[RMDB]
Background:
This 177-nucleotide RNA was probed chemically with 2A3. Reactivities are given for positions 27 through 126.
RNA sequence: GGGAACGACUCGAGUAGAGUCGAAAACAAUGUGACGCAUGAUGCUAGCUCUGCCAUUAAUAGACCACAACUCACAUUUGUGAAGAAUUUUAUUACUGCCAAUCCGGCAUGGAGUAAGGCAGUCUUUGUCCAUCAUUAACUUCGGUUAAUGAUGGACAAAAGAAACAACAACAACAAC
Reactivity to 2A3 in 0.01 (KOAc 150mM, MgCl2 10mM, bicine 150mM(pH8.5), 24C), signal-to-noise 1, nucleotides 027 to 126: c020a000a150u070g050u090g000a020c030g000c040a050u100g060a120u120g110c030u030a010g030c020u000c070u100g020c000c000a030u060u080a030a060u070a100g070a040c010c000a030c070a060a030c060u020c010a000c040a080u070u070u230g020u000g030a080a040g030a160a060u000u000u150u060a110u160u090a000c030u000g000c000c000a050a050u000c010c110g060g000c250a050u100g060g000a000g000u060a060a030g000g050c000a000g000u010c000u000u020u010
The 2A3 profile rests on 606 reads. The reactions ran in a buffer of 150 mM KOAc, 10 mM MgCl2 and 150 mM bicine (pH 8.5), at 24 C. For 2A3 the reverse transcriptase was SuperScript II with manganese.